[RMDB]
RNA sequence: GGGAACGACUCGAGUAGAGUCGAAAACAAUAUCACUCUCUAGGGGUGACUCAGAGCAGGGGAAGGAGUUACCCCUAAAAAGUAUGUUAGAAUGAUUUUAUCGCAUCAUAUCCUUUUUUAUGUAAUUACUGUACGGUUGUUUCGACAACCGUACAGUAAAAGAAACAACAACAACAAC
Reactivity to 2A3 in 0.01 (KOAc 150mM, MgCl2 10mM, bicine 150mM(pH8.5), 24C), signal-to-noise 2, nucleotides 027 to 126: c040a030a030u020a000u130c030a000c020u010c000u010c050u010a000g000g080g000g000u000g000a000c000u000c000a100g100a140g110c020a070g040g060g000g110a020a090g110g000a000g000u000u010a000c000c000c000c000u000a020a000a000a000a000g010u020a020u080g030u030u100a060g100a170a070u080g080a070u070u000u110u080a160u230c080g020c050a000u000c010a040u020a170u160c050c070u080u010u030u030u050u170a180u240g110u040a000a080u030u030